[RMDB]
RNA sequence: GGGAACGACUCGAGUAGAGUCGAAAAGAAAGAAAGAAGAAAGCUCUGUGAAAUUAGAAAAUAGGAAAAAGAGACUACUGGCCUUGACUUCCUAUUGUCUGGGCUAUUUUACAAGUCACUGGAGCAAAUGAGCCUUUUAUUUCGAUAAAAGGCUCAUAAAAGAAACAACAACAACAAC
Reactivity to 2A3 in 0.01 (KOAc 150mM, MgCl2 10mM, bicine 150mM(pH8.5), 24C), signal-to-noise 2, nucleotides 027 to 126: g100a030a040a010g070a020a070a000g030a040a000g000a070a180a010g000c000u000c050u050g000u010g100a150a230a250u100u090a100g010a050a100a000a010u030a000g000g130a060a100a030a080a010g060a020g020a030c020u070a070c020u130g060g030c000c000u020u010g010a010c020u040u030c000c010u040a030u080u070g030u010c040u020g000g030g000c000u000a030u020u090u010u020a070c020a080a000g020u010c010a010c100u110g030g020a000g000c030a000a040
Reactivity to DMS in 0.01 (KOAc 150mM, MgCl2 10mM, bicine 150mM(pH8.5), 24C), signal-to-noise 2, nucleotides 027 to 126: g010a090a150a110g000a040a150a110g010a120a120g000a190a070a150g000c020u000c020u000g020u000g000a050a130a110u010u030a010g000a080a030a020a000u000a000g000g000a010a030a080a080a280g010a000g000a020c040u010a070c270u020g010g040c100c000u000u010g000a300c140u010u000c000c000u000a000u000u000g000u000c010u000g010g010g010c070u000a010u010u000u020u010a030c120a070a060g000u000c010a020c020u040g000g000a020g000c000a050a080
Conditions: 150 mM KOAc, 10 mM MgCl2 and 150 mM bicine (pH 8.5), 24 C. Chemical mapping of a 177-nucleotide RNA with 2A3 and DMS. Values cover nucleotides 27 to 126. For 2A3, 828 sequencing reads were counted.